[RMDB]
RNA sequence: GGGAACGACUCGAGUAGAGUCGAAAAAGCAACGAGUCUGUGUGGGACGUUUUAUCCCAAGCUCUGAGUAGAGCACGCGCUCACACACACCGCGAGCGAGCAUCAGCAGAGCGCAAACGCUGGUAAAGUUCCUCCACUUAUUCGUAAGUGGAGGAACAAAAGAAACAACAACAACAAC
Reactivity to 2A3 in 0.01 (KOAc 150mM, MgCl2 10mM, bicine 150mM(pH8.5), 24C), signal-to-noise 2, nucleotides 027 to 126: a020g080c030a030a030c010g030a000g050u030c030u100g010u010g010u020g030g010g010a060c000g000u000u000u160u180a100u020c040c010c000a010a020g010c000u010c010u090g300a210g080u250a020g150a000g020c000a010c070g030c000g000c010u020c000a040c010a000c010a010c010a010c000c050g060c010g030a010g020c030g000a030g000c000a130u060c010a000g020c000a020g040a040g070c010g010c010a060a030a070c060g010c040u070g030g040u110a080a080a030
Reactivity to DMS in 0.01 (KOAc 150mM, MgCl2 10mM, bicine 150mM(pH8.5), 24C), signal-to-noise 2, nucleotides 027 to 126: a090g000c050a080a050c060g000a110g030u000c070u010g030u000g000u010g010g000g000a030c030g010u000u000u000u020a130u010c020c020c000a130a180g000c010u000c000u000g000a130g020u010a050g000a010g040c000a100c110g010c040g010c020u000c000a020c000a010c030a120c220a030c090c030g000c030g000a120g010c050g000a090g010c050a050u000c020a050g030c050a090g000a100g000c050g010c120a070a070a120c160g000c040u010g020g020u010a040a090a160
Conditions: 150 mM KOAc, 10 mM MgCl2 and 150 mM bicine (pH 8.5), 24 C. An RNA of 177 nucleotides, treated with 2A3 and DMS and read out base by base. For DMS the reverse transcriptase was MarathonRT. The DMS profile rests on 1,633 reads. It was measured as part of the RMDB library M2PK90.